The data come from the RNA Mapping Database (RMDB), library OK1LIB. The record gives the reactivity of an RNA of 177 nucleotides to 2A3 and DMS. Values cover nucleotides 27 to 126. Conditions: 150 mM KOAc, 10 mM MgCl2 and 150 mM bicine (pH 8.5), 24 C. 2A3 adducts were read by reverse transcription with SuperScript II with manganese. For DMS, 141,987 sequencing reads were counted.
RNA sequence: GGGAACGACUCGAGUAGAGUCGAAAACUACCGACGCCCUGUGUUGAGGCGUGGUGACGCCUCGAGACCGUCGUUGAGAUGGGAGGAAGGGUGUACACCUGACUGUUCGAGCAGAUGUGAGUCCAGGGCGUCUGGCUAGCUUCGGCUGGCUGGGCGCAAAAGAAACAACAACAACAAC
Reactivity to 2A3 in 0.01 (KOAc 150mM, MgCl2 10mM, bicine 150mM(pH8.5), 24C), signal-to-noise 9, nucleotides 027 to 126: c030u070a080c010c030g030a020c010g010c010c010c010u050g020u020g060u100u120g020a010g010g000c010g010u010g020g050u080g080a020c000g000c000c000u010c010g010a030g020a020c010c000g010u020c010g030u070u240g130a080g000a080u050g040g030g020a060g060g070a050a040g020g000g000u010g020u040a050c020a030c010c010u050g070a100c010u050g110u200u140c060g070a050g040c040a030g030a110u090g080u050g090a040g030u020c050c030a030g010g070
Reactivity to DMS in 0.01 (KOAc 150mM, MgCl2 10mM, bicine 150mM(pH8.5), 24C), signal-to-noise 9, nucleotides 027 to 126: c090u020a130c070c050g010a090c030g000c020c010c010u000g000u020g010u010u010g000a030g010g010c010g020u010g000g020u030g010a110c010g010c010c000u000c010g000a120g000a100c020c030g020u000c010g010u050u050g000a220g000a030u000g010g000g010a100g010g010a220a060g000g000g020u010g010u010a060c070a090c020c020u000g000a130c030u010g000u010u010c080g000a090g010c060a050g000a070u010g010u010g000a110g000u010c030c050a070g000g000